[RMDB]
RNA sequence: GGGAACGACUCGAGUAGAGUCGAAAAGGAACUCUGUGCAGGCAUGAAGCCUCCACGUGCGUGCGAAAGCACCCGGAAACGGCUGCGCAUCGUACCGAGCUGAAGGAGGCACGGCUCAAAAUAAAAAGGUGGUACUACUGUUCGCAGUAGUACUACCAAAAGAAACAACAACAACAAC
Reactivity to DMS in 0.01 (KOAc 150mM, MgCl2 10mM, bicine 150mM(pH8.5), 24C), signal-to-noise 6, nucleotides 027 to 126: g010g000a110a070c030u010c110u020g020u010g000c000a020g010g010c010a020u000g000a080a100g020c010c000u010c010c020a300c030g030u000g030c030g040u000g010c000g000a150a100a160g000c010a010c030c000c000g000g000a110a090a160c010g010g010c000u000g010c000g020c000a040u040c110g000u000a070c110c090g010a010g010c000u010g000a050a070g040g010a020g000g000c000a300c040g010g000c000u010c000a120a070a090a080u060a080a090a040a110a080
Reactivity to 2A3 in 0.01 (KOAc 150mM, MgCl2 10mM, bicine 150mM(pH8.5), 24C), signal-to-noise 9, nucleotides 027 to 126: g080g010a080a060c010u010c020u040g010u010g000c000a000g000g000c000a010u020g040a090a030g000c000c000u000c000c000a030c010g000u000g000c010g000u000g000c000g060a080a020a020g000c000a010c000c000c000g000g020a060a060a030c010g000g000c000u000g000c000g000c000a040u090c050g040u040a110c060c090g000a000g000c010u030g030a160a060g040g000a000g000g000c010a010c000g000g000c000u010c020a080a100a020a040u300a030a070a020a010a010
This 177-nucleotide RNA was probed chemically with DMS and 2A3. The 2A3 profile rests on 71,515 reads.